[RMDB]
Overview:
Structure probing data (2A3 and DMS) for a 177-nucleotide construct. Conditions: 150 mM KOAc, 10 mM MgCl2 and 150 mM bicine (pH 8.5), 24 C.
RNA sequence: GGGAACGACUCGAGUAGAGUCGAAAAGACUACACAAAAUGGAAAAGUGAACUAUUUAUUAGCGUAUGAUGCUAAAGUUUUCCGUAAAGGUGGCGUAUCACAACAUACGGUCUAUACCAUUACUCCGCGGUGCUUAUAUGUUCGCAUAUAAGCACCGAAAAGAAACAACAACAACAAC
Reactivity to 2A3 in 0.01 (KOAc 150mM, MgCl2 10mM, bicine 150mM(pH8.5), 24C), signal-to-noise 7, nucleotides 027 to 126: g000a000c030u160a030c020a000c020a050a180a010a130u140g060g050a080a030a060a040g070u120g080a090a050c030u040a180u190u230u050a170u130u030a030g000c000g050u110a120u290g130a070u270g040c010u010a000a000a030g000u000u000u060u050c020c020g080u110a070a060a060g060g020u010g000g020c010g000u050a020u090c040a040c020a250a060c010a020u050a020c020g020g010u000c010u030a080u020a110c010c000a030u030u120a070c050u050c050c030g000
Reactivity to DMS in 0.01 (KOAc 150mM, MgCl2 10mM, bicine 150mM(pH8.5), 24C), signal-to-noise 2, nucleotides 027 to 126: g030a080c000u010a260c060a000c070a040a050a120a090u010g020g000a070a070a030a100g020u030g010a030a040c070u010a060u000u030u000a100u030u000a000g000c000g040u040a090u040g020a110u020g010c010u000a010a140a090g000u000u000u000u010c000c000g000u000a010a090a120g000g040u000g010g000c020g000u000a010u010c090a060c180a060a080c210a070u000a000c000g000g000u010c030u000a030u040a040c100c040a120u030u030a030c070u010c080c120g030